[RMDB]
RNA sequence: GGGAACGACUCGAGUAGAGUCGAAAAAACUGUGGGUAAUGCCCGAUGAUCUGGUGACAGCAAAGGUGUGAUUCCGCCAGAGGAGCAGCCUGUGUGGUAUUAGCUUGUUGGUGAGGUAACGGCUCACGUGUGAAAUAAAGUUCGCUUUAUUUCACACAAAAGAAACAACAACAACAAC
Reactivity to 2A3 in 0.01 (KOAc 150mM, MgCl2 10mM, bicine 150mM(pH8.5), 24C), signal-to-noise 5, nucleotides 027 to 126: a010a010c080u070g000u080g030g010g020u060a090a040u080g040c010c010c020g040a130u090g020a040u030c020u020g020g030u030g050a040c040a010g020c030a050a080a090g080g030u080g030u060g090a180u120u030c040c000g010c030c000a030g050a070g030g030a030g030c010a000g030c020c010u090g030u060g020u040g060g000u050a070u090u070a060g040c040u020u060g040u040u040g020g020u010g000a020g000g000u020a030a020c020g050g000c000u010c020a020c020
Reactivity to DMS in 0.01 (KOAc 150mM, MgCl2 10mM, bicine 150mM(pH8.5), 24C), signal-to-noise 7, nucleotides 027 to 126: a060a060c070u010g010u000g010g000g000u000a080a070u000g010c030c010c020g010a110u000g000a110u010c030u010g010g010u000g010a100c070a080g000c120a040a090a050g000g020u010g010u010g000a120u000u000c040c030g010c090c080a080g010a110g010g010a040g010c040a090g010c030c020u000g000u000g020u000g010g000u010a040u010u000a070g010c080u000u010g010u010u000g010g010u000g000a040g010g010u000a080a090c190g000g010c010u000c020a040c060
This 177-nucleotide RNA was probed chemically with 2A3 and DMS. The reactions ran in a buffer of 150 mM KOAc, 10 mM MgCl2 and 150 mM bicine (pH 8.5), at 24 C. Reactivities are given for positions 27 through 126. For 2A3 the reverse transcriptase was SuperScript II with manganese. The data come from the RNA Mapping Database (RMDB), library RFMREP.